[RMDB]
RNA sequence: GGGAACGACUCGAGUAGAGUCGAAAAUUCGUCAGACCCUUUGGAAAGUGAUAACGCUGCUACCACUACAGAGGAAAAGGUAGAGUCAACAAACGAUUCGGCGAGGAGUAACUCUCCGGAUGAACAACGCUACUCCCGAGUUCGCUCGGGAGUAGCGAAAAGAAACAACAACAACAAC
Reactivity to 2A3 in 0.01 (KOAc 150mM, MgCl2 10mM, bicine 150mM(pH8.5), 24C), signal-to-noise 2, nucleotides 027 to 126: u030u020c000g000u000c000a000g000a100c130c060c000u000u000u040g250g140a300a290a030g060u020g050a100u070a250a000c180g000c120u060g000c000u010a000c020c020a000c000u100a050c050a000g170a020g030g000a000a000a180a000g000g060u120a000g040a000g050u080c000a050a070c020a150a110a000c060g000a010u020u020c000g010g000c020g020a000g010g040a130g090u260a230a150c000u000c000u000c010c010g000g000a000u020g000a060a010c050a000a000